[RMDB]
RNA sequence: GGGAACGACUCGAGUAGAGUCGAAAACGAUGCUGUUUACCGCUUCAUAACGCAGGGACUGACCGACAGAGGUCAUCUGCGAUGUCGGGUCCAUCGGUACGAGCUUCCACCCCUCCGGCACGCUGGGCCCUUGUGGACAGUUCGCUGUCCACAAGGGAAAAGAAACAACAACAACAAC
Reactivity to DMS in 0.01 (KOAc 150mM, MgCl2 10mM, bicine 150mM(pH8.5), 24C), signal-to-noise 3, nucleotides 027 to 126: c070g020a080u000g020c090u010g010u000u000u020a180c020c050g000c120u000u010c080a080u030a130a150c060g010c010a030g020g000g020a100c180u010g000a040c030c030g000a190c240a100g000a180g010g010u000c030a000u000c020u000g010c020g010a060u000g020u000c040g010g000g000u010c020c020a070u000c030g020g020u000a080c220g000a090g020c130u000u000c010c010a140c060c000c010c010u000c020c020g000g000c050a030c060g010c050u010g020g000g000
Reactivity to 2A3 in 0.01 (KOAc 150mM, MgCl2 10mM, bicine 150mM(pH8.5), 24C), signal-to-noise 2, nucleotides 027 to 126: c010g060a040u110g020c100u030g090u120u180u100a100c010c040g020c080u060u100c050a090u060a300a080c040g000c020a010g050g010g070a140c090u030g010a000c010c050g150a140c110a140g230a100g060g030u000c000a050u000c000u030g000c000g040a040u050g040u020c000g000g000g050u000c020c000a040u020c010g000g010u060a060c050g030a010g000c030u090u010c020c000a050c040c000c000c000u020c000c000g000g000c050a020c050g060c030u040g030g010g030